[RMDB]
An RNA of 207 nucleotides, treated with 2A3 and DMS and read out base by base. Conditions: 150 mM KOAc, 10 mM MgCl2 and 150 mM bicine (pH 8.5), 24 C. For DMS, 1,828 sequencing reads were counted. It was measured as part of the RMDB library M2RFPK. The 2A3 profile rests on 4,090 reads.
RNA sequence: GGGAACGACUCGAGUAGAGUCGAAAAGAAAGAAAGAACGAAAUCUGACAGAAUGACGGAUUCGAUCGUUGUGGUCGGCGGGCCACCACGUCAUUCCUUCGCACUGUCUCCGGGCAGACCGCCAUAAAAAAGCGGAUCUACUUCGGUAGAUCCGCAAGUUAACCAACAGGUUCGCCUGUUGGUUAACAAAAGAAACAACAACAACAAC
Reactivity to 2A3 in 0.01 (KOAc 150mM, MgCl2 10mM, bicine 150mM(pH8.5), 24C), signal-to-noise 4, nucleotides 027 to 156: g050a010a080a010g070a020a090a030g050a080a030c040g020a080a020a080u060c050u050g020a040c050a050g170a160a220u200g040a040c030g000g010a020u060u090c080g050a080u140c040g010u000u020g000u010g020g000u040c050g020g040c040g020g010g000c000c000a000c000c010a000c000g030u030c040a030u030u040c010c010u070u080c040g040c050a040c030u000g000u010c010u000c050c070g020g010g000c020a020g030a100c000c020g020c010c020a050u300a010a160a020a040a020a000g010c000g000g000a000u000c000u000a000c000u010u050c130g050g000u000a000g000a000u000c000c000g000c000a000a000
Reactivity to DMS in 0.01 (KOAc 150mM, MgCl2 10mM, bicine 150mM(pH8.5), 24C), signal-to-noise 1, nucleotides 027 to 156: g000a110a080a070g010a150a070a010g000a040a210c050g000a070a070a080u000c070u000g000a300c030a010g000a070a080u010g000a030c020g040g020a210u000u000c010g010a060u000c080g040u000u000g040u010g000g050u000c030g000g000c070g060g000g000c050c000a010c010c060a030c000g000u050c010a080u000u000c030c030u000u000c040g000c060a140c050u000g030u000c000u000c030c070g050g000g140c030a070g010a070c120c010g000c030c000a150u010a000a060a050a090a100a100g000c020g030g020a020u000c000u000a010c000u000u010c300g020g000u000a000g010a000u000c010c000g000c000a000a020